[RMDB]
Record summary:
This 207-nucleotide RNA was probed chemically with DMS. DMS adducts were read by reverse transcription with MarathonRT. For DMS, 2,617 sequencing reads were counted.
RNA sequence: GGGAACGACUCGAGUAGAGUCGAAAAUCCUAAGUCUGUGAGUAGGGUCGUUAACAGCGACGAAGAUAUCGGAAACGAUAUCAGAGCUGUUUACGACCCGCAGAUACACAGAUAUGGAAAAGGGUCACUUGGUAUCUUCGGAUACCAAGUGACCCAAUCAUGAAACUUUGUUCGCAAAGUUUCAUGAAAAAGAAACAACAACAACAAC
Reactivity to DMS in 0.01 (KOAc 150mM, MgCl2 10mM, bicine 150mM(pH8.5), 24C), signal-to-noise 2, nucleotides 027 to 156: u000c010c000u010a130a300g020u010c000u000g010u000g030a200g060u000a160g040g000g050u000c010g000u000u000a060a020c000a000g040c000g060a300c180g010a200a200g000a020u000a010u000c000g020g020a200a110a260c000g000a050u000a040u010c000a090g010a300g000c010u000g000u000u000u000a010c000g010a010c030c000c000g000c050a010g010a180u000a110c000a070c010a030g010a030u000a300u000g010g000a040a050a100a190g010g010g030u000c000a050c010u000u000g010g000u000a030u010c010u010u010c300g050g010a030u010a040c000c000a000a050g000u000g000a010c000c010c000a000a000
Source: RMDB library RNAMAK, as collected in RNAgym. The RNA was probed in 150 mM KOAc, 10 mM MgCl2 and 150 mM bicine (pH 8.5) at 24 C.